[RMDB]
Structure probing data (2A3 and DMS) for a 177-nucleotide construct.
For 2A3 the reverse transcriptase was SuperScript II with manganese.
For DMS the reverse transcriptase was MarathonRT.
For DMS, 4,036 sequencing reads were counted.
RNA sequence: GGGAACGACUCGAGUAGAGUCGAAAAACAUGUUAAGUGUUCAUUUGAUUUAUUAAGUGUGCGCUCUGGGCUAGACACUGUGAUAGGUGCUGGGAUUACAGCAGAGAACAAAAUCCCUGCCCACAGCCACGUACUUUUCAUUCGUGAAAAGUACGUGAAAAGAAACAACAACAACAAC
Reactivity to 2A3 in 0.01 (KOAc 150mM, MgCl2 10mM, bicine 150mM(pH8.5), 24C), signal-to-noise 3, nucleotides 027 to 126: a000c050a070u110g010u160u210a160a060g030u010g030u040u030c010a040u040u040u110g080a060u060u080u240a140u060u180a130a040g020u030g010u040g070c030g000c020u000c040u050g030g000g000c020u020a050g060a090c010a000c040u020g020u020g030a090u100a100g040g000u060g050c020u020g010g000g030a030u040u090a060c030a040g010c050a020g050a020g040a300a030c040a050a230a000a020u010c010c000c030u020g010c000c000c000a020c010a000g030c010
Reactivity to DMS in 0.01 (KOAc 150mM, MgCl2 10mM, bicine 150mM(pH8.5), 24C), signal-to-noise 4, nucleotides 027 to 126: a060c050a060u020g000u000u010a100a100g010u000g010u000u010c050a060u000u000u000g000a080u000u000u010a070u020u000a060a040g020u000g020u000g020c060g010c030u000c180u000g010g010g010c040u000a080g010a090c060a040c010u000g010u010g010a090u020a130g010g010u010g020c010u020g000g010g000a070u000u010a090c160a100g020c060a090g010a120g010a060a050c120a050a070a070a100u010c000c000c000u000g000c000c000c010a030c140a040g010c050